An RNA of 177 nucleotides, treated with DMS and 2A3 and read out base by base. The reactions ran in a buffer of 150 mM KOAc, 10 mM MgCl2 and 150 mM bicine (pH 8.5), at 24 C. Source: RMDB library M2PK50, as collected in RNAgym.
[RMDB]
RNA sequence: GGGAACGACUCGAGUAGAGUCGAAAACUCUGCUAAUUCGUUAGCAGAGGUACACUGGGACGGCUCGGGAGGGGGAUACUCGCGGUCCCAAGAAGAAUCCAGCAAGCACAUUAUUCGUAAUGUGCAAGAUACCGUCUAGAUUCGUCUAGACGGUAUCAAAAGAAACAACAACAACAAC
Reactivity to DMS in 0.01 (KOAc 150mM, MgCl2 10mM, bicine 150mM(pH8.5), 24C), signal-to-noise 3, nucleotides 027 to 126: c000u000c000u000g000c000u000a000a030u000u010c190g010u000u000a000g000c000a020g000a000g010g010u000a040c100a220c090u000g000g010g010a070c040g000g000c060u000c110g010g000g020a160g010g010g000g010g010a150u010a030c040u000c030g020c060g010g010u000c000c010c010a010a040g010a100a110g010a120a080u000c020c020a100g000c180a090a160g010c010a010c010a010u000u000a050u000u000c150g010u010a010a000u000g020u000g000c010a050a030
Reactivity to 2A3 in 0.01 (KOAc 150mM, MgCl2 10mM, bicine 150mM(pH8.5), 24C), signal-to-noise 4, nucleotides 027 to 126: c000u000c000u010g000c000u000a050a000u070u060c220g080u100u010a000g000c000a000g000a000g000g010u040a030c070a010c070u030g000g020g010a010c020g090g040c040u080c090g090g060g030a140g050g040g010g020g040a040u110a150c000u000c020g040c010g020g010u000c010c010c010a010a000g030a000a000g040a020a040u050c020c000a010g050c070a150a050g000c000a000c000a000u010u030a010u060u060c110g040u020a000a010u010g000u000g000c010a000a000